Source: RMDB library RNAMAK, as collected in RNAgym. This 207-nucleotide RNA was probed chemically with DMS and 2A3. For DMS the reverse transcriptase was MarathonRT. For DMS, 3,124 sequencing reads were counted. Conditions: 150 mM KOAc, 10 mM MgCl2 and 150 mM bicine (pH 8.5), 24 C.
RNA sequence: GGGAACGACUCGAGUAGAGUCGAAAAGCAUGCGAUUCGUCGCAUGCAAAAAACCGUAGGCUCUCCCGAUGGACUUGGACCCAUUCUUCGAAAGAGGAAUGGCUAGUCUAAGGGACAUGAGCCUAAACGGAAAAACACAUCCGUUCGCGGAUGUGAAGUUUAAAUCAUGCUUCGGCAUGAUUUAAACAAAAGAAACAACAACAACAAC
Reactivity to DMS in 0.01 (KOAc 150mM, MgCl2 10mM, bicine 150mM(pH8.5), 24C), signal-to-noise 2, nucleotides 027 to 156: g020c000a000u000g000c010g010a050u010u000c300g030u010c000g010c010a040u010g000c000a040a010a030a090a060a080c020c000g020u000a060g020g000c010u000c010u000c010c000c010g000a240u010g020g000a040c000u000u000g050g000a150c260c010c000a000u000u000c010u000u000c010g000a180a140a260g020a030g020g000a040a000u010g000g000c020u000a020g010u000c000u010a080a300g000g000g010a050c140a010u000g000a030g060c000c000u000a000a020a100c040g010g010a060a070a160a110a130c000a000c010a010u000c000c010g000u000u010c300g010c020g010g000a020u000g020u000g000a030a060
Reactivity to 2A3 in 0.01 (KOAc 150mM, MgCl2 10mM, bicine 150mM(pH8.5), 24C), signal-to-noise 3, nucleotides 027 to 156: g010c000a010u010g000c000g020a030u020u120c240g040u000c010g200c010a000u020g000c020a010a010a000a010a010a000c000c000g010u020a040g000g000c010u000c010u020c000c020c010g060a170u300g060g000a000c010u040u130g040g120a110c000c010c020a000u000u010c010u000u000c010g070a100a100a060g010a000g010g000a010a010u000g000g010c000u000a000g000u000c000u020a040a160g020g020g000a020c060a140u210g010a000g060c000c000u000a010a000a000c010g010g020a080a050a000a120a000c000a000c000a000u000c040c000g020u050u080c300g000c010g080g000a000u000g000u000g010a040a010